An RNA of 177 nucleotides, treated with 2A3 and DMS and read out base by base. For DMS, 3,101 sequencing reads were counted. The reactions ran in a buffer of 150 mM KOAc, 10 mM MgCl2 and 150 mM bicine (pH 8.5), at 24 C. For 2A3, 2,384 sequencing reads were counted.
[RMDB]
RNA sequence: GGGAACGACUCGAGUAGAGUCGAAAACGUGCGUACUGGGCCGCCGGCACAAUGUUCGACCCAGCCGUCUCAGAGGACGCGGUUCGACAACGAUCAGCCAGCCGGUCAGCGGGGUCCUCCUAGCUAGACCUCGCUGACGAUUCGUCGUCAGCGAGGUAAAAGAAACAACAACAACAAC
Reactivity to 2A3 in 0.01 (KOAc 150mM, MgCl2 10mM, bicine 150mM(pH8.5), 24C), signal-to-noise 1, nucleotides 027 to 126: c040g000u040g000c030g020u080a070c030u080g010g050g000c000c010g000c040c010g050g000c020a020c030a110a170u120g030u130u070c030g000a040c020c000c010a040g050c120c010g040u030c050u060c050a300g050a190g170g010a000c000g000c020g030g000u030u030c010g020a000c020a040a020c050g060a130u130c020a000g050c060c010a020g060c040c000g040g000u040c020a010g030c010g000g030g000g000u010c000c000u000c000c020u030a030g000c020u050a020g050
Reactivity to DMS in 0.01 (KOAc 150mM, MgCl2 10mM, bicine 150mM(pH8.5), 24C), signal-to-noise 3, nucleotides 027 to 126: c100g000u010g000c040g020u010a070c070u000g000g010g010c030c060g000c080c050g000g020c030a090c080a100a140u000g010u010u000c030g000a020c050c010c000a090g020c200c040g020u000c030u000c170a160g020a130g020g000a020c010g010c070g010g000u000u000c020g000a030c030a060a070c130g000a100u000c130a130g000c030c040a090g010c050c080g010g000u000c010a030g010c050g000g000g000g010u000c020c030u000c020c040u000a080g010c120u000a100g000